[RMDB]
RNA sequence: GGGAACGACUCGAGUAGAGUCGAAAAAAGUCUUAAAGUCAGAUAAUGUCAGUUCUCUGUCUUUGUUCUUUACCUUUAAUAUUGAGUUAAUUGACUAUUCUGGAUGUUUUUCUUCUUAUGAAUUUGGAAUAUGUUUGGAAAGAUCCACAAAAUAACACACUUACAUAACCUUCGGGUUAUGUAAGUGAAAAGAAACAACAACAACAAC
Reactivity to 2A3 in 0.01 (KOAc 150mM, MgCl2 10mM, bicine 150mM(pH8.5), 24C), signal-to-noise 2, nucleotides 027 to 156: a000a000g040u040c040u150u100a070a030a030g000u010c000a000g060a050u020a040a030u130g200u230c060a040g020u020u050c030u020c010u020g030u050c000u030u030u040g070u090u070c000u050u110u060a080c010c000u160u140u120a130a080u150a180u150u220g050a040g030u030u150a090a090u170u060g060a040c040u060a150u070u040c030u040g000g020a020u050g050u040u040u010u020u030c020u010u010c020u020u130a060u040g110a220a180u100u160u170g030g020a010a000u010a020u090g110u090u040u040g000g040a000a030a010g050a020u030c000c030a000c060a110a060a030a060u260a170a020c100a010
Reactivity to DMS in 0.01 (KOAc 150mM, MgCl2 10mM, bicine 150mM(pH8.5), 24C), signal-to-noise 1, nucleotides 027 to 156: a050a040g000u010c030u020u000a060a030a040g000u010c000a040g020a080u000a030a080u010g020u000c090a120g000u000u000c070u000c020u000g010u000c050u010u010u000g000u000u000c060u000u000u000a130c060c050u010u010u010a030a080u010a130u000u000g000a090g030u000u000a060a080u000u010g010a080c040u000a150u000u010c050u000g030g000a080u000g010u000u000u000u000u000c020u000u010c020u000u010a100u000g000a090a100u000u000u000g020g020a090a000u000a010u000g020u010u010u000g030g020a100a050a090g010a090u000c020c050a060c060a020a030a020a040u000a030a040c090a110
An RNA of 207 nucleotides, treated with 2A3 and DMS and read out base by base.
The DMS profile rests on 2,662 reads.
For 2A3 the reverse transcriptase was SuperScript II with manganese.
Source: RMDB library OK3TST, as collected in RNAgym.
DMS adducts were read by reverse transcription with MarathonRT.